[RMDB]
RNA sequence: GGGAACGACUCGAGUAGAGUCGAAAAUGUUAAUGUAGUAGCUUGGCUUUACGCAGCAAUACUUAAUGGUUGCGCUUGGUUUGUAAAACCUAAUCGCACUAGUGUUGUUUCUUUUAAUGAAUGGGCUAGAGCUUAGACUUCGGUCUAAGCAAAAGAAACAACAACAACAAC
Reactivity to DMS in 0.01 (KOAc 150mM, MgCl2 10mM, bicine 150mM(pH8.5), 24C), signal-to-noise 3, nucleotides 027 to 129: u000g100u000u010a030a080u040g060u050a050g000u000a000g050c020u000u030g090g030c060u010u070u020a000c110g060c040a090g050c130a110a100u050a090c160u010u010a000a000u030g030g000u060u010g010c060g050c210u030u020g050g000u000u090u000g010u050a120a030a080a000c000c000u000a030a010u040c090g000c030a110c020u020a160g000u040g070u010u190g010u010u190u080c060u000u020u010u000a080a120u050g000a070a000u050g020g000g020c040u020a020g000a180
Reactivity to 2A3 in 0.01 (KOAc 150mM, MgCl2 10mM, bicine 150mM(pH8.5), 24C), signal-to-noise 4, nucleotides 027 to 129: u120g000u020u050a040a030u090g020u030a010g050u010a020g000c020u010u140g110g000c000u130u140u040a110c210g010c020a000g000c020a000a040u060a030c000u090u180a070a090u180g140g000u050u100g000c000g020c020u000u040g040g140u070u010u080g190u100a190a100a000a020c020c010u070a050a030u080c000g080c010a020c040u070a040g100u000g000u090u000g020u000u040u000c000u040u090u030u060a050a020u110g120a130a010u050g020g030g050c050u040a050g030a010

Structure probing data (DMS and 2A3) for a 170-nucleotide construct. The reactions ran in a buffer of 150 mM KOAc, 10 mM MgCl2 and 150 mM bicine (pH 8.5), at 24 C. High DMS reactivity at an A or C suggests that its Watson-Crick edge is free. For 2A3, 5,220 sequencing reads were counted.